[RMDB]
An RNA of 177 nucleotides, treated with 2A3 and DMS and read out base by base. 2A3 is a SHAPE reagent: it acylates the 2'-hydroxyl of flexible nucleotides of all four kinds. For 2A3 the reverse transcriptase was SuperScript II with manganese.
RNA sequence: GGGAACGACUCGAGUAGAGUCGAAAAGACCGUGGGUUCGCCCACGGUCAAAUCCCUCGAUGCGGCGCAUCGAGCCAACAAUCCGACGGUCGGUCCGAACAAAAAGAGCGGUGUUCGCACCGCUCAACAUUGAUGUAUAGUUCGCUAUACAUCAAUGAAAAGAAACAACAACAACAAC
Reactivity to 2A3 in 0.01 (KOAc 150mM, MgCl2 10mM, bicine 150mM(pH8.5), 24C), signal-to-noise 6, nucleotides 027 to 126: g000a000c000c010g000u010g010g020g010u050u100c180g120c030c000c000a000c000g010g000u000c000a000a000a000u000c000c000c000u000c020g020a010u020g020c160g170g000c080g220c160a030u010c020g020a010g030c030c020a100a130c030a050a110u060c040c030g050a020c030g100g020u050c010g010g010u010c020c010g050a080a050c060a050a090a030a020a000g000a000g000c000g000g000u000g030u020u060c170g010c060a000c010c000g000c000u000c000a000a000
Reactivity to DMS in 0.01 (KOAc 150mM, MgCl2 10mM, bicine 150mM(pH8.5), 24C), signal-to-noise 7, nucleotides 027 to 126: g000a010c000c000g050u000g010g010g020u010u010c250g010c000c000c020a010c000g000g010u000c000a000a050a130u000c020c040c000u000c030g000a010u000g000c020g010g010c200g010c020a020u000c010g000a050g020c090c080a060a080c110a070a110u010c080c040g010a190c130g000g010u000c020g020g010u000c020c020g010a100a080c150a060a050a090a100a100g000a010g010c000g020g020u000g010u000u010c160g010c020a010c000c000g000c000u000c000a010a070